[RMDB]
RNA sequence: GGGAACGACUCGAGUAGAGUCGAAAAUUGCCCGAAGCCUUUCCGGAGCUUGCUGCCAAAGGAACCGCAUCGCCGCCAAUCUCGCACUUGCACAAACUUAUAUUGCACUGCAGUAUGGGUCGGGGCGUUUGGCACGGAUAUUCGUAUCCGUGCCAAAAAAAGAAACAACAACAACAAC
Reactivity to 2A3 in 0.01 (KOAc 150mM, MgCl2 10mM, bicine 150mM(pH8.5), 24C), signal-to-noise 2, nucleotides 027 to 126: u110u090g090c000c000c050g000a020a010g020c000c020u070u040u030c030c030g000g070a100g000c000u050u090g000c000u130g000c000c000a000a180a070g100g000a060a030c090c010g030c000a040u020c000g000c000c010g000c000c000a040a040u030c010u020c030g020c030a030c110u090u050g000c090a040c050a100a160a080c070u050u080a060u050a020u130u070g040c050a050c270u150g000c000a000g040u010a090u030g000g010g000u030c010g030g010g020g010c020g030
Reactivity to DMS in 0.01 (KOAc 150mM, MgCl2 10mM, bicine 150mM(pH8.5), 24C), signal-to-noise 2, nucleotides 027 to 126: u000u040g060c010c000c030g020a140a260g020c060c060u000u000u000c060c020g000g000a100g000c090u000u000g080c120u000g000c040c020a000a130a100g000g000a090a050c030c050g020c080a130u000c040g000c000c000g080c010c040a100a180u000c040u010c070g010c020a130c040u000u020g060c040a120c150a120a100a030c120u020u010a030u010a040u000u020g000c000a120c280u010g000c000a000g000u000a020u000g000g030g000u020c110g000g000g000g010c070g020
The data come from the RNA Mapping Database (RMDB), library RFM100. Structure probing data (2A3 and DMS) for a 177-nucleotide construct. Conditions: 150 mM KOAc, 10 mM MgCl2 and 150 mM bicine (pH 8.5), 24 C.